Structure probing data (DMS) for a 177-nucleotide construct.
The reactions ran in a buffer of 150 mM KOAc, 10 mM MgCl2 and 150 mM bicine (pH 8.5), at 24 C.
Source: RMDB library OK2TST, as collected in RNAgym.
Reactivities are given for positions 27 through 126.
For DMS the reverse transcriptase was MarathonRT.
[RMDB]
RNA sequence: GGGAACGACUCGAGUAGAGUCGAAAAUUCACUGAACACAAGGUAGGCUAGCAAAGUAGAGAGUAAUAUCUUUGCCUCACCUUGGCCACAAGGAUUUAUUUUGUCAGUAACCAAGUUUAGUGUACUGAACCGUAGAGGCGUUCGCGCCUCUACGGUUAAAAGAAACAACAACAACAAC
Reactivity to DMS in 0.01 (KOAc 150mM, MgCl2 10mM, bicine 150mM(pH8.5), 24C), signal-to-noise 1, nucleotides 027 to 126: u010u000c010a030c010u000g020a020a020c000a150c160a130a170g010g000u000a040g020g000c020u000a060g010c070a020a040a050g010u000a070g060a020g010a130g010u020a020a010u010a120u010c110u010u000u000g000c100c000u000c130a260c020c000u000u000g000g010c170c260a050c060a040a030g000g040a260u000u010u000a030u030u000u000u010g060u000c010a000g010u010a010a010c000c000a160a150g000u000u000u000a020g000u000g000u010a130c100u000g050